[RMDB]
RNA sequence: GGGAACGACUCGAGUAGAGUCGAAAACUCAUCGCAAUGGGUAUCAUCAUGGGCGGCAUUGCUAUAUUCAGCAACAUCGUGAACCCCGCGGGAAUGAUCAUCAUGGCAGCCUCCAUGAUCGUCAUUGCUAUUGCUCUGGACCAGCUAGCCAAUGUCCGCUCAGGGCAAUUUUCGAAUUGCCCUGAGCAAAAGAAACAACAACAACAAC
Reactivity to 2A3 in 0.01 (KOAc 150mM, MgCl2 10mM, bicine 150mM(pH8.5), 24C), signal-to-noise 1, nucleotides 027 to 156: c000u020c030a050u110c040g030c020a080a020u040g000g000g080u230a170u220c030a000u020c000a000u070g020g000g040c160g010g030c020a080u090u150g010c000u050a030u010a020u100u160c040a030g000c040a060a040c000a100u040c020g020u000g040a090a080c040c000c050c000g030c070g000g050g030a150a030u100g020a010u020c000a020u010c010a010u030g040g000c030a030g070c000c000u000c000c000a020u000g000a000u050c030g020u010c010a000u000u000g010c020u030a100u020u190g010c000u010c040u030g010g000a000c000c000a010g060c070u080a010g070c060c060a100a140u210g020u020c000c040